[RMDB]
RNA sequence: GGGAACGACUCGAGUAGAGUCGAAAAACGGCCUCUACGGAGGCCGAGGGCUUAGCUGCUUGUGAGCAGAGUCCACACCAAGUCGUGUUCACAGUGGCUAAGUUCCGAGACUAGCUACGGCUAGUCAAUAUUUGGUAUGGUUCGCCAUACCAAAUAUAAAAGAAACAACAACAACAAC
Reactivity to DMS in 0.01 (KOAc 150mM, MgCl2 10mM, bicine 150mM(pH8.5), 24C), signal-to-noise 8, nucleotides 027 to 126: a140c010g020g000c000c000u000c010u010a110c170g030g000a020g010g020c010c000g010a010g000g000g010c000u000u000a010g000c000u000g000c010u020u020g020u000g010a010g010c000a050g000a150g020u010c050c100a080c170a150c240c250a080a090g010u000c020g010u000g010u000u000c020a000c010a020g010u000g000g010c000u000a000a000g010u000u020c000c020g000a140g010a020c000u000a010g010c000u000a120c220g020g000c000u000a000g000u000c000a090
Reactivity to 2A3 in 0.01 (KOAc 150mM, MgCl2 10mM, bicine 150mM(pH8.5), 24C), signal-to-noise 9, nucleotides 027 to 126: a000c010g010g000c020c010u020c010u020a080c300g130g000a000g000g000c000c000g000a030g000g010g000c000u010u000a000g000c000u010g000c010u090u300g010u010g000a000g000c020a010g030a210g110u050c090c090a080c010a040c060c050a080a030g050u050c050g070u010g010u020u000c000a000c000a000g010u010g010g000c000u000a000a000g000u100u010c000c010g000a010g000a000c000u000a000g010c000u020a030c260g090g000c000u000a000g000u000c000a000
Conditions: 150 mM KOAc, 10 mM MgCl2 and 150 mM bicine (pH 8.5), 24 C. Chemical mapping of a 177-nucleotide RNA with DMS and 2A3. 2A3 adducts were read by reverse transcription with SuperScript II with manganese. For DMS the reverse transcriptase was MarathonRT.